The data come from the RNA Mapping Database (RMDB), library OK1LIB. Structure probing data (2A3) for a 177-nucleotide construct.
RNA sequence: GGGAACGACUCGAGUAGAGUCGAAAAGCGACUGCGGUGCCUAGCACAACAAACAAGGUAGCAAUGCACACGUCCAUUGCAGCAGGCACAGAUACCCGAACUGUACCUGCCACCGGAGGGACGCAAAAUGCACUCGGGCGUUCGCGCCCGAGUGCAUAAAAGAAACAACAACAACAAC
Reactivity to 2A3 in 0.01 (KOAc 150mM, MgCl2 10mM, bicine 150mM(pH8.5), 24C), signal-to-noise 1, nucleotides 027 to 126: g000c000g140a140c020u060g000c080g040g000u090g030c000c050u130a080g180c000a040c050a040a190c040a300a080a020c100a040a000g000g000u030a100g000c020a000a000u050g020c000a010c010a000c220g200u000c040c040a000u000u020g000c000a000g050c000a000g000g070c030a000c060a000g070a090u100a180c000c000c000g020a080a020c000u000g000u030a080c000c000u060g000c010c000a030c030c000g030g060a120g020g040g070a010c000g000c000a140a140a040